[RMDB]
RNA sequence: GGGAACGACUCGAGUAGAGUCGAAAAGUUGAUUCUUCUCCAUGACACCUCAUAAGAUGCCAUGGAUGUGAUAAUAUGUUAGAUGGAUGAGUAUUAUUUGGUAAUGAUGAUGACUGUGCUGAAUUCGCCACAGAUACUUAAGUGUGGGAAGAUUUCACCUGCCUCAUGAUUUCGAUCAUGAGGCAGGAAAAGAAACAACAACAACAAC
Reactivity to 2A3 in 0.01 (KOAc 150mM, MgCl2 10mM, bicine 150mM(pH8.5), 24C), signal-to-noise 1, nucleotides 027 to 156: g010u000u030g010a110u040u070c060u020u000c010u050c000c000a000u000g030a030c000a010c020c000u240c020a060u030a140a000g080a090u010g000c000c010a060u080g060g030a080u080g070u030g030a010u030a150a070u130a040u160g090u130u090a090g040a140u020g010g020a000u030g000a160g100u070a080u140u040a080u080u190u140g110g000u030a040a100u030g080a030u010g000a000u100g020a000c080u040g030u020g030c000u010g060a040a070u110u070c060g090c130c000a030c000a000g080a080u050a040c020u120u050a070a060g060u000g100u060g060g000g030a060a060g020a110u050u000u000c010a040
Structure probing data (2A3) for a 207-nucleotide construct.
The 2A3 profile rests on 529 reads.
For 2A3 the reverse transcriptase was SuperScript II with manganese.